RNA sequence: GGGAACGACUCGAGUAGAGUCGAAAAUCCACUAUGAAUCUAGUCACUAAAUAAACACAAUUAGCUACUGUGUGUAAUAGUGAGUGUGGAUAACACAAAAUAAUAGUAUAGUUUUGGAAGAUUAUACGCGCCCUUGCUCCGUUCGCGGAGCAAGGAAGCAAGGUAUUCGCUUCGGCGAAUACCUUGCAAAAGAAACAACAACAACAAC
Reactivity to 2A3 in 0.01 (KOAc 150mM, MgCl2 10mM, bicine 150mM(pH8.5), 24C), signal-to-noise 2, nucleotides 027 to 156: u010c010c000a010c040u210a190u260g120a090a070u050c110u040a110g110u050c030a000c010u020a040a010a050u110a020a120a000c000a000c000a010a040u160u120a050g070c090u150a050c030u010g000u000g010u010g010u020a020a030u010a020g000u010g010a020g020u060g020u030g010g060a050u140a240a080c080a010c020a000a120a040a030u260a050a040u070a190g020u020a030u000a050g000u000u000u020u160g070g040a050a040g000a060u060u030a020u020a040c040g040c010g050c090c000c000u000u020g000c000u010c000c000g010u050u050c070g010c000g050g000a010g000c000a000a000g000g000a010a000
Annotation
This 207-nucleotide RNA was probed chemically with 2A3. 2A3 adducts were read by reverse transcription with SuperScript II with manganese. The data come from the RNA Mapping Database (RMDB), library M2RFPK.